[RMDB]
RNA sequence: GGGAACGACUCGAGUAGAGUCGAAAACGGGACUUCGGUCCCGACAAUAACCUUUGUGCUACAGAGGUGACGGGAGCAUAGCGUCACCCAUUGGGUGACGACCCUAUGUCGUCACCGACGAAGUAGCACUCUGGUAGAUAGCGUACUUCGGUACGAAGUCUACCCCCUGUUUCGACAGGGGGUAGACAAAAGAAACAACAACAACAAC
Reactivity to 2A3 in 0.01 (KOAc 150mM, MgCl2 10mM, bicine 150mM(pH8.5), 24C), signal-to-noise 4, nucleotides 027 to 156: c010g020g010g020a000c010u060u080c300g130g010u020c010c000c020g000a010c020a040a190u240a060a010c010c000u000u000u000g000u010g010c000u000a010c000a010g010a010g010g000u010g000a000c040g010g030g090a150g070c010a020u060a010g100c010g010u010c010a000c000c010c040a250u110u300g000g000g000u000g000a000c020g090a120c090c000c000u000a030u110g300u300c000g010u000c000a000c000c000g000a000c020g070a090a030g000u000a000g000c000a000c000u010c000u010g020g000u010a070g060a220u260a060g150c020g010u010a010c000u010u050c220g130g000u000a010c050g030a170a020
Structure probing data (2A3) for a 207-nucleotide construct. The 2A3 profile rests on 1,923 reads. The reactions ran in a buffer of 150 mM KOAc, 10 mM MgCl2 and 150 mM bicine (pH 8.5), at 24 C. It was measured as part of the RMDB library RNAMAK. For 2A3 the reverse transcriptase was SuperScript II with manganese.